[RMDB]
Structure probing data (2A3 and DMS) for a 177-nucleotide construct.
For 2A3 the reverse transcriptase was SuperScript II with manganese.
DMS adducts were read by reverse transcription with MarathonRT.
Values cover nucleotides 27 to 126.
DMS (dimethyl sulfate) methylates the pairing face of unpaired adenines and cytosines.
The 2A3 profile rests on 2,810 reads.
The data come from the RNA Mapping Database (RMDB), library M2PK90.
The RNA was probed in 150 mM KOAc, 10 mM MgCl2 and 150 mM bicine (pH 8.5) at 24 C.

RNA sequence: GGGAACGACUCGAGUAGAGUCGAAAAAUAAAGAGCGUAAACGCGUCAUUGAGUGACGUGAAGAUCAUCCAAGUCUGCUGUCUACAGUCGUAGAUAGCGCACAUUACGCUAAGAUGAUCAUAAAAAACCGUGGUUAUAAGUUCGCUUAUAACCACGGAAAAGAAACAACAACAACAAC
Reactivity to 2A3 in 0.01 (KOAc 150mM, MgCl2 10mM, bicine 150mM(pH8.5), 24C), signal-to-noise 3, nucleotides 027 to 126: a000u290a010a080a010g110a020g010c010g050u020a030a020a130c000g000c000g020u000c000a010u020u300g270a110g230u040g000a000c010g000u010g100a070a020g010a020u020c010a010u000c000c030a040a000g020u000c070u110g000c020u000g010u000c000u000a030c060a230g120u260c170g010u100a010g000a000u000a010g000c000g050c030a020c000a060u050u130a010c000g000c030u010a030a010g020a000u000g000a010u010c020a050u260a010a230a020a000a000a010
Reactivity to DMS in 0.01 (KOAc 150mM, MgCl2 10mM, bicine 150mM(pH8.5), 24C), signal-to-noise 3, nucleotides 027 to 126: a080u040a040a090a080g000a140g020c000g020u000a050a090a220c070g020c010g020u000c000a070u020u030g000a190g020u010g010a010c000g020u000g010a060a090g000a020u000c000a010u000c000c120a070a110g010u010c060u000g010c010u000g000u000c000u000a000c000a140g010u010c210g010u000a000g020a000u000a000g020c000g040c190a030c070a060u000u010a050c010g040c020u010a100a090g000a030u000g000a010u000c020a150u020a010a070a090a060a060a060